[RMDB]
RNA sequence: GGGAACGACUCGAGUAGAGUCGAAAACGUUGCGCUGAUGGCACCGCACCGCGCGGACGGCUGAGAAGGCCAAAUGUCGUCGGGGUGUUCGCCGACCCCGGGAUUUCCGACGUCCGCCUCCGUGCCCCUGACCCAGGCUAUUCGUAGCCUGGGUCAGAAAAGAAACAACAACAACAAC
Reactivity to 2A3 in 0.01 (KOAc 150mM, MgCl2 10mM, bicine 150mM(pH8.5), 24C), signal-to-noise 2, nucleotides 027 to 126: c010g040u000u060g090c050g000c100u070g030a110u060g020g000c020a010c000c000g020c000a020c010c050g080c040g000c030g060g000a040c030g000g000c070u080g060a060g110a240a090g090g020c000c050a080a110a100u300g020u100c040g000u000c000g000g010g000g020u060g100u010u100c020g010c040c060g040a030c000c000c020c010g000g020g000a110u090u060u000c000c050g000a000c020g060u000c000c000g000c020c000u040c000c030g000u070g000c000c000c000